[RMDB]
RNA sequence: GGGAACGACUCGAGUAGAGUCGAAAAAAAAAAAGAUAUGGAGAUGGAGAGGCGUCUUCUAAGACAGUCGCUCGGAAACGAGCGAUCGAGAAGACGAACUACCUUGAGGUCUCCUAAGUCAAAAAAACAUCUUAUAGGAGUUCGCUCCUAUAAGAUGAAAAGAAACAACAACAACAAC
Reactivity to DMS in 0.01 (KOAc 150mM, MgCl2 10mM, bicine 150mM(pH8.5), 24C), signal-to-noise 2, nucleotides 027 to 126: a000a000a050a300a050a060a250g050a030u010a240u000g000g000a070g000a000u020g000g010a300g000a020g000g000c020g000u000c000u000u000c000u020a220a130g010a010c300a040g000u000c000g000c010u000c000g000g000a020a040a090c010g020a010g000c000g000a000u000c020g000a050g040a000a000g000a000c000g020a060a010c040u000a300c020c020u010u020g000a300g010g000u000c000u000c000c000u020a020a110g000u020c010a000a020a060a110a020a080a230
Notes:
Structure probing data (DMS) for a 177-nucleotide construct. The RNA was probed in 150 mM KOAc, 10 mM MgCl2 and 150 mM bicine (pH 8.5) at 24 C. Values cover nucleotides 27 to 126. Reactivities are rounded to 0.1 and cut off at 0 and 3.